[RMDB]
RNA sequence: GGGAACGACUCGAGUAGAGUCGAAAAGAUAUGGAGCCACUGCCCUUAUCUUCAACAGCUCGGAAACGAGACAUGAAGUGGGUUGGCUCCUAAGUCAAAGAAUUGUCGAGUUCGCUCGACAAUUCAAGCCUAUUGUCAUGUUCGCAUGACAAUAGGCAAAAGAAACAACAACAACAAC
Reactivity to 2A3 in 0.01 (KOAc 150mM, MgCl2 10mM, bicine 150mM(pH8.5), 24C), signal-to-noise 3, nucleotides 027 to 126: g000a000u020a010u070g000g000a020g040c000c040a080c270u290g070c020c050c020u220u260a300u240c020u050u010c000a100a110c030a130g100c000u000c010g010g030a040a000a010c000g020a000g010a020c030a070u200g010a000a000g060u270g060g010g000u030u010g000g020c000u000c000c010u000a000a000g000u000c020a070a130a000g000a000a000u000u020g000u010c000g010a000g000u030u120c190g080c090u030c020g000a000c000a000a000u000u010c000a000a000
Reactivity to DMS in 0.01 (KOAc 150mM, MgCl2 10mM, bicine 150mM(pH8.5), 24C), signal-to-noise 3, nucleotides 027 to 126: g010a010u000a140u010g000g000a020g010c000c000a000c300u000g030c010c000c020u000u010a130u020c000u000u000c010a040a180c300a160g000c000u000c000g010g000a040a010a070c010g000a000g000a080c160a130u010g010a030a030g010u000g010g010g030u000u000g010g010c010u000c010c000u000a000a040g000u000c020a100a120a130g010a000a010u000u000g000u000c000g000a010g020u000u010c210g030c000u000c000g000a010c000a000a000u010u010c000a080a090
Overview
An RNA of 177 nucleotides, treated with 2A3 and DMS and read out base by base. The RNA was probed in 150 mM KOAc, 10 mM MgCl2 and 150 mM bicine (pH 8.5) at 24 C. For 2A3 the reverse transcriptase was SuperScript II with manganese. Reactivities are given for positions 27 through 126. For DMS the reverse transcriptase was MarathonRT.